Conditions: 150 mM KOAc, 10 mM MgCl2 and 150 mM bicine (pH 8.5), 24 C.
This 177-nucleotide RNA was probed chemically with DMS and 2A3.
It was measured as part of the RMDB library TTRDES.
For 2A3 the reverse transcriptase was SuperScript II with manganese.
The DMS profile rests on 2,768 reads.

RNA sequence: GGGAACGACUCGAGUAGAGUCGAAAAGAUAUGGAUCGAGCAGGACAUGAGCAGGGUCGGAAACGACCCGGGCUCAACAGCCUGCCGAUCCUAAGUCAAAGGCGAUUAGUCUUCGGACUAAUCGCCACCAUCCCCAAUACUUCGGUAUUGGGGAUGGAAAAGAAACAACAACAACAAC
Reactivity to DMS in 0.01 (KOAc 150mM, MgCl2 10mM, bicine 150mM(pH8.5), 24C), signal-to-noise 2, nucleotides 027 to 126: g010a020u000a090u010g020g010a000u010c010g000a300g010c010a030g000g000a030c180a120u030g000a000g040c030a300g000g000g000u000c000g000g020a010a020a070c010g000a020c020c010c000g020g000g000c000u010c010a090a090c130a220g000c000c000u010g010c000c010g000a000u000c000c000u000a000a050g000u000c010a100a110a120g010g010c000g000a030u000u000a000g000u000c000u010u000c280g030g000a030c000u000a000a000u000c010g020c000c000a020
Reactivity to 2A3 in 0.01 (KOAc 150mM, MgCl2 10mM, bicine 150mM(pH8.5), 24C), signal-to-noise 2, nucleotides 027 to 126: g000a010u020a000u040g000g020a000u000c010g030a080g100c000a000g000g030a050c150a300u300g000a020g020c000a010g010g000g020u000c020g010g030a030a020a000c000g030a010c030c040c010g000g050g000c000u010c010a040a030c040a000g000c040c000u010g000c000c000g010a000u000c000c000u000a000a000g000u010c060a110a080a150g010g020c010g010a000u000u030a010g000u000c000u050u170c300g040g010a010c000u000a000a000u000c000g000c000c000a010